[RMDB]
RNA sequence: GGGAACGACUCGAGUAGAGUCGAAAACGUUGCCGACGUUGCCACCGCCGACGUUGGCUAUGCCCAGGUUGAUGGCGGUGGGUCCGCCCGCAAGCGCCGGUAUGCCUGCGGCUGCGGUCAUGGCGGCGCCGUGCGCGUGAUUCGUCACGCGCACGGCAAAAGAAACAACAACAACAAC
Reactivity to 2A3 in 0.01 (KOAc 150mM, MgCl2 10mM, bicine 150mM(pH8.5), 24C), signal-to-noise 2, nucleotides 027 to 126: c040g040u040u100g060c000c000g000a010c000g010u020u050g070c000c010a010c010c030g030c030c020g020a020c030g020u010u010g020g010c010u020a070u070g060c010c000c000a000g140g070u140u160g170a140u110g020g030c020g010g010u020g010g000g000u060c030c030g030c040c000c000g000c050a070a040g020c020g020c040c060g070g150u130a110u300g110c030c000u000g030c010g140g090c180u100g000c030g000g010u040c060a040u180g100g000c050g020g040c040
Reactivity to DMS in 0.01 (KOAc 150mM, MgCl2 10mM, bicine 150mM(pH8.5), 24C), signal-to-noise 1, nucleotides 027 to 126: c110g000u000u000g050c010c010g000a020c040g030u020u000g000c030c010a030c020c000g010c020c010g000a020c040g020u000u000g010g000c020u000a010u000g020c010c030c000a150g000g010u020u010g000a110u000g000g020c000g010g010u000g000g000g010u010c030c060g030c050c010c000g000c040a050a110g000c020g020c090c120g020g000u000a090u020g010c020c020u000g000c020g020g020c230u000g020c010g030g000u000c080a100u030g010g010c080g000g000c300
An RNA of 177 nucleotides, treated with 2A3 and DMS and read out base by base. Source: RMDB library OK2TST, as collected in RNAgym. For 2A3 the reverse transcriptase was SuperScript II with manganese. The 2A3 profile rests on 1,400 reads.